[RMDB]
RNA sequence: GGGAACGACUCGAGUAGAGUCGAAAAUCGCGUGAUGAACCUGGUGAUAGUCACUGUGUAAGGACUAGUCAUUUUACUGCUACGUUUAUAGGUGACCCCACUAUAAGUGGCUACUCUUUCAAACCUAAAGUACGUCCUACUUCGGUAGGACGUACUUAAAAGAAACAACAACAACAAC
Reactivity to DMS in 0.01 (KOAc 150mM, MgCl2 10mM, bicine 150mM(pH8.5), 24C), signal-to-noise 2, nucleotides 027 to 126: u000c080g020c080g020u010g010a040u000g000a050a170c070c070u020g020g020u020g000a050u010a080g020u010c010a060c010u000g000u000g000u020a120a140g010g000a020c030u000a030g040u010c020a020u020u000u000u030a040c120u000g010c040u000a060c130g000u000u010u000a050u000a010g000g000u010g000a300c050c040c010c020a160c050u010a020u000a040a030g010u030g000g010c010u000a010c090u000c030u000u010u010c030a030a110a220c060c080u000a060
Reactivity to 2A3 in 0.01 (KOAc 150mM, MgCl2 10mM, bicine 150mM(pH8.5), 24C), signal-to-noise 1, nucleotides 027 to 126: u090c030g010c060g040u080g050a130u060g010a050a050c010c020u070g010g100u110g020a040u040a050g000u010c010a040c260u030g020u010g080u210a060a110g070g000a030c030u040a000g000u040c030a030u030u100u090u120a120c110u080g140c020u030a010c070g100u020u050u040a120u060a020g000g020u030g060a050c010c020c040c010a000c000u010a040u030a110a020g010u060g000g080c010u030a070c010u060c000u140u080u000c080a090a100a080c000c020u120a120

An RNA of 177 nucleotides, treated with DMS and 2A3 and read out base by base. It was measured as part of the RMDB library OK2TRN. 2A3 is a SHAPE reagent: it acylates the 2'-hydroxyl of flexible nucleotides of all four kinds. For DMS, 1,656 sequencing reads were counted. For DMS the reverse transcriptase was MarathonRT.